Structure probing data (2A3) for a 177-nucleotide construct. Reactivities are given for positions 27 through 126.

[RMDB]
RNA sequence: GGGAACGACUCGAGUAGAGUCGAAAAUAUCGCAUCGACGGUGAGCUGCAGGACUACAUCGUCGGCGUCCGGGAGCUCUCGCCGAAAAGCCUCACCGGCAAUCAGACCGACUGGAUCAACAAACACAAGACACACUGCCUUUCGAGGCAGUGUGUCUAAAAGAAACAACAACAACAAC
Reactivity to 2A3 in 0.01 (KOAc 150mM, MgCl2 10mM, bicine 150mM(pH8.5), 24C), signal-to-noise 2, nucleotides 027 to 126: u180a070u090c040g000c040a070u060c010g000a010c010g010g000u060g010a000g020c000u160g080c200a040g000g050a040c030u130a150c070a140u070c020g080u080c080g000g020c000g000u000c000c010g060g000g000a020g030c000u000c000u040c060g010c000c010g030a070a070a000a040g020c010c000u030c050a100c040c000g030g000c010a000a050u070c000a000g070a080c020c010g000a070c000u050g060g040a000u090c030a000a120c020a110a040a080c150a020c040a070
The 2A3 profile rests on 798 reads.
Source: RMDB library OK1LIB, as collected in RNAgym.